[RMDB]
RNA sequence: GGGAACGACUCGAGUAGAGUCGAAAAGAACGUUGAGGUAGUUACGAGGCGUAGUAUUAUGAAGUGUGUGUAAAGAGCAUACUGAAGUACUGGAGGGCAAGUCUGGUGCCAGCAGCCGCGGUAAUACCAGAUUUGGUGUGUUCGCACACCAAAUCUGAAAAGAAACAACAACAACAAC
Reactivity to 2A3 in 0.01 (KOAc 150mM, MgCl2 10mM, bicine 150mM(pH8.5), 24C), signal-to-noise 2, nucleotides 027 to 126: g060a000a010c090g000u050u100g020a040g010g010u010a020g110u040u030a110c040g010a050g020g000c030g000u030a000g020u010a000u150u010a090u190g230a220a010g040u000g000u000g000u010g050u140a040a040a040g030a010g050c000a000u000a010c010u020g050a020a010g000u020a010c080u040g010g110a090g070g000g020c010a000a150g000u050c050u010g000g080u070g100c000c000a000g000c010a000g000c040c010g060c000g050g000u140a100a070u050a040c000
Reactivity to DMS in 0.01 (KOAc 150mM, MgCl2 10mM, bicine 150mM(pH8.5), 24C), signal-to-noise 3, nucleotides 027 to 126: g000a090a070c140g000u070u030g010a130g050g020u000a020g010u020u020a030c040g010a110g000g050c000g000u040a080g000u000a020u000u040a080u020g000a170a010g030u000g020u000g000u000g010u010a050a100a140g050a230g020c000a000u000a020c030u000g000a110a060g000u000a000c010u000g010g010a110g000g000g020c040a060a120g000u040c050u020g000g000u010g000c000c000a080g010c060a140g010c050c060g000c080g000g030u010a040a060u020a070c110